[RMDB]
RNA sequence: GGGAACGACUCGAGUAGAGUCGAAAAGAUAUGGAGGCAGCGAUAAGCUGUACUCGGAAACGAGUAUACAGCUUUUGACGCUGUCUCCUAAGUCAAACAACUCUCCUUGUUCGCAAGGAGAGUUGAAGCUAUGACUUAUCUUCGGAUAAGUCAUAGCAAAAGAAACAACAACAACAAC
Reactivity to DMS in 0.01 (KOAc 150mM, MgCl2 10mM, bicine 150mM(pH8.5), 24C), signal-to-noise 4, nucleotides 027 to 126: g010a030u000a250u010g000g000a020g030g010c000a000g030c000g020a130u010a030a010g020c010u010g010u000a000c010u000c000g000g000a050a080a140c000g000a030g010u000a120u000a070c090a010g010c000u000u000u000u010g020a200c050g010c000u000g020u000c000u000c000c000u000a000a060g000u010c010a100a100a300c010a000a010c000u010c000u000c000c000u000u000g000u000u020c220g010c000a010a010g000g000a000g000a000g000u000u010g000a060a090
Reactivity to 2A3 in 0.01 (KOAc 150mM, MgCl2 10mM, bicine 150mM(pH8.5), 24C), signal-to-noise 4, nucleotides 027 to 126: g020a010u040a030u120g000g000a010g010g000c000a010g010c010g030a080u040a300a050g000c010u010g010u000a000c000u010c000g010g000a030a040a000c000g000a000g020u080a070u020a180c040a000g000c010u060u140u210u200g060a010c010g000c000u000g000u000c000u010c010c000u000a000a000g000u010c000a030a010a050c010a000a000c000u010c010u000c010c000u000u030g020u120u150c270g010c160a000a000g000g000a000g010a000g000u000u000g000a000a000

An RNA of 177 nucleotides, treated with DMS and 2A3 and read out base by base. Values cover nucleotides 27 to 126. It was measured as part of the RMDB library TTRDEL. For 2A3 the reverse transcriptase was SuperScript II with manganese.